[RMDB]
RNA sequence: GGGAACGACUCGAGUAGAGUCGAAAAGGCGACCCUUGCGACUGUGAGUCGUGAACCUGGUCAGGCCUUAACUGGAGCAGCCAUAAGCGGUGUAACUUUGUGUGAGGGUUGCCGCCACCGAAAGAAUUACUGAAUGCCUUCGGGCAUUCAGUAAUUCGAUAGCAUUUUACUUCGGUAAAAUGCUAUCAAAAGAAACAACAACAACAAC
Reactivity to DMS in 0.01 (KOAc 150mM, MgCl2 10mM, bicine 150mM(pH8.5), 24C), signal-to-noise 1, nucleotides 027 to 156: g010g030c020g030a020c010c000c050u000u000g010c000g000a020c040u000g000u000g000a300g020u000c010g020u010g020a090a180c050c040u010g000g000u020c050a220g030g020c010c020u000u000a100a130c100u000g020g020a090g010c040a220g000c010c020a070u000a170a300g000c040g020g000u000g020u020a170a090c000u000u000u000g020u000g010u050g010a060g020g030g030u010u000g020c000c010g020c000c030a050c040c020g020a130a100a130g020a030a010u000u000a000c000u000g010a040a010u010g010c000c000u000u010c280g020g010g010c020a010u000u000c000a000g010u000a000a000u000u000c000
Reactivity to 2A3 in 0.01 (KOAc 150mM, MgCl2 10mM, bicine 150mM(pH8.5), 24C), signal-to-noise 4, nucleotides 027 to 156: g000g000c010g000a000c000c000c020u000u000g020c030g020a010c010u010g010u010g030a060g060u040c010g010u030g020a020a040c040c060u000g010g050u130c010a020g000g030c010c010u130u070a110a070c300u100g010g000a010g000c010a000g010c000c000a020u020a070a020g000c010g000g000u060g020u070a010a010c020u020u040u050g170u080g010u000g080a000g000g000g000u000u010g000c000c000g000c000c020a070c010c010g100a110a160a110g010a010a000u010u010a000c000u000g000a000a000u000g010c010c020u030u070c150g020g000g000c000a000u000u010c000a000g000u000a000a000u000u010c000

Overview: Conditions: 150 mM KOAc, 10 mM MgCl2 and 150 mM bicine (pH 8.5), 24 C. Chemical mapping of a 207-nucleotide RNA with DMS and 2A3. DMS adducts were read by reverse transcription with MarathonRT. It was measured as part of the RMDB library ARCHII. The DMS profile rests on 3,823 reads. For 2A3 the reverse transcriptase was SuperScript II with manganese.